[RMDB]
RNA sequence: GGGAACGACUCGAGUAGAGUCGAAAAAUAUAGAAAAACUGUAUAAAGACCUUACAGGACACAUGCUUGACAGUUAUUCUGUCAUGCUAUGUGGUGAUAAUUCUGCUAAGUUUUGGGAAGAGGCAUUAUAGGAAACCGUUCGCGGUUUCCAAAAGAAACAACAACAACAAC
Reactivity to 2A3 in 0.01 (KOAc 150mM, MgCl2 10mM, bicine 150mM(pH8.5), 24C), signal-to-noise 2, nucleotides 027 to 129: a000u130a000u060a000g210a020a050a000a000a000c030u050g020u030a070u020a200a150a000g140a010c000c030u010u060a000c000a010g000g020a010c000a010c000a010u000g020c000u000u000g000a010c000a030g010u110u080a110u240u110c000u020g030u000c010a000u000g000c020u020a000u010g020u000g000g030u000g000a030u110a150a070u010u010c000u000g160c100u090a090a090g000u050u000u210u110g000g000g030a020a030g000a000g020g010c040a000u060u120a140u120a050
Reactivity to DMS in 0.01 (KOAc 150mM, MgCl2 10mM, bicine 150mM(pH8.5), 24C), signal-to-noise 4, nucleotides 027 to 129: a170u080a070u020a100g040a070a100a090a080a050c010u030g010u030a000u050a040a060a090g070a160c020c070u020u020a070c070a020g010g030a140c040a060c000a010u010g000c030u000u000g020a030c010a010g010u030u080a080u000u000c010u000g010u010c030a050u030g030c110u050a020u030g020u020g000g050u010g030a150u040a060a080u060u000c010u000g010c050u040a080a060g030u030u000u060u000g020g020g020a020a050g020a030g020g040c050a100u050u040a030u000a070
Source: RMDB library 15KLIB, as collected in RNAgym. The record gives the reactivity of an RNA of 170 nucleotides to 2A3 and DMS. For 2A3, 3,237 sequencing reads were counted. DMS adducts were read by reverse transcription with MarathonRT. 2A3 adducts were read by reverse transcription with SuperScript II with manganese.